About this RNA: This 177-nucleotide RNA was probed chemically with DMS.
RNA sequence: GGGAACGACUCGAGUAGAGUCGAAAAUGAUCCACCAGGAGAAGUAGCGGAGAACCCACCUCCAGAGGACCCCUUCAACGAACAGAGAAGCUCCCCCCCCGCGGGAGUAGAGCCGUAGCGAUGGGAGGUAAAUACACUUCUUCGGAAGUGUAUUUACAAAAGAAACAACAACAACAAC
Reactivity to DMS in 0.01 (KOAc 150mM, MgCl2 10mM, bicine 150mM(pH8.5), 24C), signal-to-noise 2, nucleotides 027 to 126: u020g010a120u010c000c010a110c090c070a080g010g010a090g000a100a110g010u000a030g010c050g000g010a120g000a120a110c030c010c030a100c110c010u000c000c050a120g030a080g010g000a070c030c050c050c060u000u000c090a050a090c090g020a090a050c080a110g000a070g010a110a120g010c040u000c000c000c000c020c000c010c010c040g050c190g000g000g000a060g010u020a050g000a140g010c030c030g000u000a040g040c060g020a080u000g000g010g010a090g020
It was measured as part of the RMDB library VIROID. Reactivities are given for positions 27 through 126. The RNA was probed in 150 mM KOAc, 10 mM MgCl2 and 150 mM bicine (pH 8.5) at 24 C.